Source: RMDB library OK2TRN, as collected in RNAgym. An RNA of 177 nucleotides, treated with DMS and 2A3 and read out base by base. DMS adducts were read by reverse transcription with MarathonRT.
[RMDB]
RNA sequence: GGGAACGACUCGAGUAGAGUCGAAAAGAUUUGAGCCAGUAGGACUGUGAUUGACCCAGUGCUCUUACUGACUUAACUGACAAAGUAGCAUUAAAGCAGGACUAGUGGGUUUCAGUCUAGGAGUCUGCCUACACCUACAUUUCGAUGUAGGUGUAGGAAAAGAAACAACAACAACAAC
Reactivity to DMS in 0.01 (KOAc 150mM, MgCl2 10mM, bicine 150mM(pH8.5), 24C), signal-to-noise 7, nucleotides 027 to 126: g010a020u000u000u010g000a020g000c000c000a050g000u000a020g000g000a060c010u000g010u000g000a190u000u010g000a140c090c070c090a100g010u000g010c030u000c020u000u000a110c170u000g000a060c040u000u000a100a130c140u010g000a070c060a050a040a030g010u010a030g020c020a030u000u010a050a080a290g000c010a010g000g000a040c010u000a020g010u000g010g010g000u000u010u000c010a050g010u000c010u010a120g010g010a100g000u000c020u000g010
Reactivity to 2A3 in 0.01 (KOAc 150mM, MgCl2 10mM, bicine 150mM(pH8.5), 24C), signal-to-noise 3, nucleotides 027 to 126: g020a020u150u140u160g010a010g010c010c020a060g120u020a010g010g020a010c000u000g020u050g070a130u150u160g080a110c030c020c020a000g030u010g020c000u010c000u020u070a140c080u020g080a010c000u050u080a080a050c210u040g060a030c020a020a130a000g030u130a060g060c010a020u080u110a130a020a020g000c010a010g000g020a010c010u040a020g190u080g090g100g010u060u150u040c010a010g000u000c000u020a050g070g100a080g060u020c030u050g040